[RMDB]
RNA sequence: GGGAACGACUCGAGUAGAGUCGAAAAUAAUAUGUUUACUUCUCCAGUAUUUAUCAAAUCAACUGUCUUAUUUUUAUUUGUAACUUUAAUCUCUAACUUUGGUGGAGGUAUUGGUAAUUGUACUCCAGGACGUAGGUAUAUUCGUAUACCUACGUCCAAAAGAAACAACAACAACAAC
Reactivity to 2A3 in 0.01 (KOAc 150mM, MgCl2 10mM, bicine 150mM(pH8.5), 24C), signal-to-noise 1, nucleotides 027 to 126: u000a040a030u070a040u220g100u090u010u060a030c010u000u000c000u000c040c000a010g030u040a180u030u170u020a010u150c030a000a030a070u000c000a010a010c000u030g100u000c040u170u150a070u250u110u120u140u040a150u140u010u020g060u060a180a030c030u170u200u000a090a090u120c030u000c000u100a170a110c160u110u300u220g180g000u100g000g000a030g090g100u000a000u030u070g020g000u070a220a000u000u280g050u010a090c020u030c070c000a000
Annotation
Chemical mapping of a 177-nucleotide RNA with 2A3. Reactivities are given for positions 27 through 126.